An RNA of 177 nucleotides, treated with DMS and read out base by base. High DMS reactivity at an A or C suggests that its Watson-Crick edge is free.
[RMDB]
RNA sequence: GGGAACGACUCGAGUAGAGUCGAAAACAUUUUAACGCGUGUGCACUCUCUAACACGAAUUACGCAGUUAUUUUCGACUUUACUCGAGUCGUUAUAGCGUGCGUUGAGAGAGUUGGCCGCGAUUGAAACAUUGGUGAACUUUCGAGUUCACCAAUGUAAAAGAAACAACAACAACAAC
Reactivity to DMS in 0.01 (KOAc 150mM, MgCl2 10mM, bicine 150mM(pH8.5), 24C), signal-to-noise 2, nucleotides 027 to 126: c270a090u010u010u010u000a030a030c200g050c010g010u000g000u000g010c030a090c030u000c020u000c040u000a070a060c040a030c040g010a100a080u000u010a040c070g020c080a100g000u000u000a080u000u000u000u000c020g000a010c000u000u000u000a000c030u000c000g000a000g000u000c000g000u000u000a020u000a080g010c040g000u000g010c040g030u000u000g000a010g000a040g000a060g000u000u000g010g000c040c000g000c030g000a060u010u010g020a120a090